[RMDB]
RNA sequence: GGGAACGACUCGAGUAGAGUCGAAAACGACCUUAAACAGUUCUGGUGGUGCUCUGAAUAGAGUGCUCUACUGAGAUUAUAAAAUAGAAGGUAAGCUAUUAUCUCUUACAACAGGGCAGGGCUUGUUAAAAGCCUUUCAGUUUCGACUGAAAGGCAAGAUGAUGCAGCAGUUCGCUGCUGCAUCAUCAAAAGAAACAACAACAACAAC
Reactivity to 2A3 in 0.01 (KOAc 150mM, MgCl2 10mM, bicine 150mM(pH8.5), 24C), signal-to-noise 1, nucleotides 027 to 156: c000g070a040c000c010u060u120a140a090a050c020a030g000u070u050c070u110g100g050u040g020g000u030g020c000u000c020u050g060a090a050u120a200g020a000g020u040g010c000u000c030u050a050c040u050g050a040g000a050u220u130a060u220a100a050a110a020u150a010g030a060a030g150g060u080a080a000g010c010u000a000u050u090a030u150c020u000c010u030u070a100c020a100a020c040a110g010g030g000c030a020g010g030g000c010u030u090g010u040u040a080a120a020a000g000c000c040u000u000u030c000a000g000u010u040u130c150g110a020c000u000g010a010a010a000g010g000c000a000a000
An RNA of 207 nucleotides, treated with 2A3 and read out base by base. The reactions ran in a buffer of 150 mM KOAc, 10 mM MgCl2 and 150 mM bicine (pH 8.5), at 24 C. 2A3 adducts were read by reverse transcription with SuperScript II with manganese.